Chemical mapping of a 177-nucleotide RNA with 2A3 and DMS. For DMS, 915 sequencing reads were counted. DMS adducts were read by reverse transcription with MarathonRT. The RNA was probed in 150 mM KOAc, 10 mM MgCl2 and 150 mM bicine (pH 8.5) at 24 C. For 2A3, 2,769 sequencing reads were counted. It was measured as part of the RMDB library TTRDES. For 2A3 the reverse transcriptase was SuperScript II with manganese.
RNA sequence: GGGAACGACUCGAGUAGAGUCGAAAAGAUAUGGAGCGUACAGACAUGAUCUUACGUCGGAAACGACGUAGGAUCAACAGCUGUCACGCUCCUAAGUCAAAACCCUGACCACUUCGGUGGUCAGGGAGGUAAGACCACGGUUCGCCGUGGUCUUACCAAAAGAAACAACAACAACAAC
Reactivity to 2A3 in 0.01 (KOAc 150mM, MgCl2 10mM, bicine 150mM(pH8.5), 24C), signal-to-noise 1, nucleotides 027 to 126: g000a010u000a010u030g000g000a010g010c000g000u000a010c010a000g020a010c130a300u300g000a000u000c010u020u020a030c000g040u010c000g020g000a010a020a020c030g000a000c000g000u000a000g000g000a000u010c000a010a000c000a020g040c000u000g010u070c090a010c020g020c000u010c000c010u000a000a000g010u000c030a000a040a060a180c000c000c000u000g000a000c000c010a010c010u060u080c300g180g000u010g000g000u000c000a010g000g000g010a110
Reactivity to DMS in 0.01 (KOAc 150mM, MgCl2 10mM, bicine 150mM(pH8.5), 24C), signal-to-noise 1, nucleotides 027 to 126: g000a060u000a060u020g000g010a010g000c020g000u000a030c000a040g010a050c050a170u000g010a040u000c010u050u000a000c000g010u000c000g070g000a010a030a020c030g050a010c010g000u000a010g000g000a000u000c000a100a010c300a180g000c000u010g030u050c220a000c030g000c030u030c000c000u000a010a140g000u010c020a190a140a160a190c000c000c000u030g020a020c000c000a030c000u000u030c190g060g040u020g000g010u000c000a000g000g000g020a000